Structure probing data (DMS and 2A3) for a 177-nucleotide construct. It was measured as part of the RMDB library RFM100.
RNA sequence: GGGAACGACUCGAGUAGAGUCGAAAAGAUUAAUCUUAUUUUUGGUCUCCGUGGCAGGGCCCCUGUGCUUGCGCAUGCCUUGCCACACAGUGUCAUCGGGCUUACACUAUCCCCGAUAGACGCGAACCUUAAUGUCCGUCUUCGGACGGACAUUAAGAAAAGAAACAACAACAACAAC
Reactivity to DMS in 0.01 (KOAc 150mM, MgCl2 10mM, bicine 150mM(pH8.5), 24C), signal-to-noise 1, nucleotides 027 to 126: g000a000u020u010a050a090u000c110u020u000a110u020u010u000u000u030g010g030u000c010u000c010c300g000u010g000g020c000a000g040g020g020c020c000c160c000u000g030u000g000c080u060u010g050c000g000c000a000u010g000c020c000u010u000g000c030c000a030c000a000c120a090g000u000g000u000c000a010u000c000g020g000g020c300u000u040a070c220a030c200u000a090u010c300c000c010c000g030a000u000a020g020a000c020g000c000g010a080a130c190
Reactivity to 2A3 in 0.01 (KOAc 150mM, MgCl2 10mM, bicine 150mM(pH8.5), 24C), signal-to-noise 7, nucleotides 027 to 126: g000a000u130u220a070a110u130c090u120u280a230u180u180u040u060u090g120g000u040c020u010c050c070g000u000g010g000c000a010g010g000g000c020c010c000c020u020g000u010g030c050u130u160g020c010g000c000a010u240g010c000c000u010u000g010c000c000a000c000a000c000a000g010u020g010u000c000a000u000c000g000g010g030c050u150u190a040c150a030c100u120a160u260c030c000c000c000g010a000u010a100g000a000c000g000c000g000a020a030c000

Record summary
The DMS profile rests on 1,841 reads.